Conditions: 150 mM KOAc, 10 mM MgCl2 and 150 mM bicine (pH 8.5), 24 C. Structure probing data (DMS and 2A3) for a 207-nucleotide construct. Reactivities are given for positions 27 through 156. DMS adducts were read by reverse transcription with MarathonRT. The 2A3 profile rests on 785 reads. It was measured as part of the RMDB library OK3TST. For 2A3 the reverse transcriptase was SuperScript II with manganese.
RNA sequence: GGGAACGACUCGAGUAGAGUCGAAAAGCGGGUGAGCCUGUGCAUUGAAAUCCUCAGCUUCAAAGAGACACAGAAGGCAAAAUAGGAAGUUGGAUUUGCAGGAGUUAGUCUCUUGGAGGGUCUUGUAAAAUUGAAGGGUUCACAUAUGCCCUGUCAACAUGCACUGCAUGUUCGCAUGCAGUGCAUGAAAAGAAACAACAACAACAAC
Reactivity to DMS in 0.01 (KOAc 150mM, MgCl2 10mM, bicine 150mM(pH8.5), 24C), signal-to-noise 1, nucleotides 027 to 156: g070c100g030g020g020u010g020a040g040c000c010u030g010u000g000c010a120u000u020g040a070a080a070u010c010c000u000c020a190g020c070u010u010c110a030a040a070g010a080g000a040c010a190c070a110g000a120a180g040g060c020a070a040a080a090u000a090g000g010a040a100g010u010u030g000g000a280u000u000u000g020c040a060g020g000a180g000u000u000a080g020u000c020u040c010u000u010g000g020a060g000g020g010u010c030u050u010g020u000a040a090a030a110u020u000g010a220a060g000g080g010u010u000c000a030c040a030u000a070u010g000c040c010c000u000g020u000c040a060a090
Reactivity to 2A3 in 0.01 (KOAc 150mM, MgCl2 10mM, bicine 150mM(pH8.5), 24C), signal-to-noise 2, nucleotides 027 to 156: g000c020g000g040g010u000g000a000g010c000c010u040g000u050g000c020a030u030u060g060a080a040a020u020c020c010u000c020a040g040c000u070u040c070a050a030a020g000a000g300a000c000a000c000a000g300a300a060g060g000c000a030a030a030a100u180a010g170g040a130a020g040u180u300g020g070a090u030u040u000g060c000a010g000g130a140g010u000u060a020g000u030c000u020c000u020u000g050g000a000g040g010g010u040c040u000u030g060u080a070a110a160a180u080u090g100a110a000g000g000g030u050u030c040a030c040a120u270a060u150g010c000c000c010u060g140u080c010a040a030